[RMDB]
RNA sequence: GGGAACGACUCGAGUAGAGUCGAAAAGGGGUCAUUCUCUAGCGUGCACGCUUGGAUUUACUUGCGAUGAUAUGCCAACUAGUCCUCUGAAGCCUCCACGGAGGAGGUUGGCAUAUCAUCGCAAGUUGUCAGCGUGUCGGGAUGACGGAGGCACCCACAUAUUUAUUCACUUCGGUGAAUAAAUAUGAAAAGAAACAACAACAACAAC
Reactivity to DMS in 0.01 (KOAc 150mM, MgCl2 10mM, bicine 150mM(pH8.5), 24C), signal-to-noise 3, nucleotides 027 to 156: g000g020g030g020u000c020a040u000u000c010u000c040u010a150g030c110g030u010g020c000a030c010g000c000u010u020g030g010a060u010u000u000a010c000u000u010g020c000g000a030u000g010a040u000a010u000g000c020c010a020a020c010u000a140g010u010c000c000u000c000u000g010a080a090g010c080c020u000c040c040a300c060g000g000a030g130g030a010g000g010u000u000g010g010c000a010u000a010u010c000a000u000c000g000c000a000a010g000u000u000g000u000c010a060g000c030g020u000g030u000c050g020g010g030a070u010g000a070c030g020g010a110g020g020c000a230c010c010c010a300
Reactivity to 2A3 in 0.01 (KOAc 150mM, MgCl2 10mM, bicine 150mM(pH8.5), 24C), signal-to-noise 3, nucleotides 027 to 156: g030g000g010g020u030c030a160u120u010c040u010c030u060a090g100c020g180u210g010c030a000c020g010c010u070u140g190g000a090u250u200u210a030c010u010u010g000c000g000a010u000g000a000u010a000u020g020c000c010a000a020c010u060a080g300u020c010c000u010c000u030g090a180a110g070c010c040u080c040c010a060c060g020g000a010g020g000a010g020g010u000u000g000g000c070a000u000a000u000c000a000u010c000g000c000a000a000g000u000u010g000u000c000a000g010c000g000u000g000u000c000g000g020g010a070u100g040a030c080g030g020a030g020g040c050a090c040c000c000a010